Description
The record gives the reactivity of an RNA of 177 nucleotides to 2A3 and DMS. For DMS, 1,647 sequencing reads were counted. The reactions ran in a buffer of 150 mM KOAc, 10 mM MgCl2 and 150 mM bicine (pH 8.5), at 24 C.
RNA sequence: GGGAACGACUCGAGUAGAGUCGAAAAGCUAUUUCCUGGCAAAGUAACAGUAGACCAAGUUACUGAUAGAUUGGUAAUAGCAGACACUGGACAUCAUAGAAUUUUGGUCGUUUGGAAGAAUGGACAAGUGAAGAUCGAGAUUCGUCUCGAUCUUCACAAAAGAAACAACAACAACAAC
Reactivity to 2A3 in 0.01 (KOAc 150mM, MgCl2 10mM, bicine 150mM(pH8.5), 24C), signal-to-noise 2, nucleotides 027 to 126: g010c020u010a030u030u000u030c000c000u040g080g000c020a070a040a030g040u030a000a000c020a040g090u120a090g110a040c060c000a090a020g030u000u000a020c020u010g060a060u080a160g120a070u050u080g030g010u010a020a000u000a020g000c010a030g020a010c030a030c030u040g040g010a030c000a040u080c010a000u060a170g200a230a140u100u090u110u110g030g020u030c050g010u000u000u070g070g010a070a020g020a040a050u060g090g020a030c030a120a060
Reactivity to DMS in 0.01 (KOAc 150mM, MgCl2 10mM, bicine 150mM(pH8.5), 24C), signal-to-noise 2, nucleotides 027 to 126: g000c010u000a020u000u000u010c030c010u000g020g000c150a210a120a010g010u010a020a030c000a130g020u010a070g010a090c110c070a130a080g020u000u010a010c000u000g000a090u010a140g000a150u010u000g010g000u000a040a010u000a000g000c000a090g000a150c170a090c040u000g000g010a080c040a030u000c030a080u010a130g000a090a120u000u010u000u000g000g000u000c020g000u000u000u000g010g010a120a060g000a050a050u000g020g010a050c140a070a130